RNA sequence: GGGAACGACUCGAGUAGAGUCGAAAAGGGUUAGGUAGCCUCAUAUACAUGAACGACUGAUGUAGAGUUCGAUUGGGGAGAUAAGUAUCUAAUGCGUGUCAUUAGGUCACCUCGGUAUGACUAGGGUGUUUUCUUUAACGUUCGCGUUAAAGAAAACAAAAGAAACAACAACAACAAC
Reactivity to DMS in 0.01 (KOAc 150mM, MgCl2 10mM, bicine 150mM(pH8.5), 24C), signal-to-noise 2, nucleotides 027 to 126: g000g000g000u010u000a110g020g000u000a120g020c020c030u000c020a060u000a080u000a130c090a100u010g020a060a040c050g000a100c070u000g010a100u020g020u010a070g000a290g010u000u000c060g000a100u000u000g030g010g000g010a090g010a070u010a020a070g010u000a010u010c010u000a010a020u000g000c030g010u000g010u010c000a020u000u000a010g000g010u000c020a040c010c010u000c050g000g010u020a040u000g010a080c100u000a060g010g010g000u000
Reactivity to 2A3 in 0.01 (KOAc 150mM, MgCl2 10mM, bicine 150mM(pH8.5), 24C), signal-to-noise 2, nucleotides 027 to 126: g040g010g000u070u070a000g020g100u050a030g070c010c030u030c030a030u140a010u040a130c110a060u170g030a050a010c020g180a070c070u050g100a090u150g140u130a060g030a020g100u050u010c000g020a080u020u040g060g000g000g000a020g020a050u110a040a060g080u130a030u000c000u000a010a020u010g000c100g120u060g070u170c010a010u030u000a000g000g010u010c010a010c000c010u000c000g000g000u070a040u080g020a060c020u010a030g000g070g090u080